[RMDB]
RNA sequence: GGGAACGACUCGAGUAGAGUCGAAAAUGAGGCACUCGGAAUCGACCGAGAGCUUUACGUGCUGAAUGGGCGGGGCUGCAGUGGUACUCAGGUAAUGCAGUCCGCCGUCCAGCCUCAUUCGGCAGAGGGCGCUGCGCAGGUUCGCCUGCGUGGCGCCAAAAGAAACAACAACAACAAC
Reactivity to 2A3 in 0.01 (KOAc 150mM, MgCl2 10mM, bicine 150mM(pH8.5), 24C), signal-to-noise 3, nucleotides 027 to 126: u130g000a000g000g000c010a000c060u000c010g070g090a050a150u060c080g120a080c020c000g000a010g050a030g000c000u010u070u130a060c160g040u080g000c010u040g070a110a090u010g020g000g000c020g000g000g000g000c010u040g000c000a010g000u150g170g170u090a090c030u070c150a040g010g170u110a080a000u030g000c000a000g000u010c020c030g000c000c020g020u020c000c000a030g000c000c010u070c020a020u030u040c020g040g030c070a020g000a140g120
Reactivity to DMS in 0.01 (KOAc 150mM, MgCl2 10mM, bicine 150mM(pH8.5), 24C), signal-to-noise 1, nucleotides 027 to 126: u000g020a010g000g000c030a040c010u010c030g020g060a200a250u190c250g000a160c000c000g030a030g020a020g040c000u010u010u000a020c250g000u010g040c000u100g030a000a000u000g010g000g010c000g000g000g000g080c000u000g050c000a080g000u000g000g000u040a020c040u050c090a070g030g050u000a020a170u000g010c030a000g010u000c000c000g010c020c020g020u000c080c080a180g000c000c010u000c030a040u000u000c060g010g000c060a090g020a260g050
An RNA of 177 nucleotides, treated with 2A3 and DMS and read out base by base. For DMS the reverse transcriptase was MarathonRT. Values cover nucleotides 27 to 126.